[RMDB]
RNA sequence: GGGAACGACUCGAGUAGAGUCGAAAAAAAGAUAUGGAAGCUGCGAGAAAUGCAUAACUAUGAAGGGAGCUCGGAAACGAGCUCCUGGAGUUAUGUAAAUUUCGAUGAGCAGCUUCCUAAGUCAAAACUCACUUUAUUUGUUCGCAAAUAAAGUGAGAAAAGAAACAACAACAACAAC
Reactivity to DMS in 0.01 (KOAc 150mM, MgCl2 10mM, bicine 150mM(pH8.5), 24C), signal-to-noise 1, nucleotides 027 to 126: a070a120a050g000a030u000a300u000g000g000a020a020g040c010u000g010c000g030a210g020a010a020a020u000g010c000a000u000a010a000c010u020a230u010g010a170a160g000g000g000a020g050c000u000c000g000g000a080a070a120c010g010a010g000c000u000c000c000u000g010g000a000g010u000u010a010u010g010u000a040a040a140u000u010u000c000g030a170u010g000a300g010c000a000g030c020u000u000c000c000u010a000a020g010u000c050a130a040a110a100
Reactivity to 2A3 in 0.01 (KOAc 150mM, MgCl2 10mM, bicine 150mM(pH8.5), 24C), signal-to-noise 1, nucleotides 027 to 126: a000a000a060g040a030u030a040u110g020g000a000a010g000c010u020g020c000g080a280g020a130a030a000u040g070c000a040u000a000a010c030u100a260u300g060a010a000g070g000g000a000g020c000u010c020g000g020a090a020a000c010g030a000g040c010u000c000c040u000g000g000a010g000u000u000a000u010g000u040a040a120a190u010u080u030c050g020a120u170g030a070g000c000a010g000c010u000u000c000c000u000a050a000g010u000c030a000a100a000a190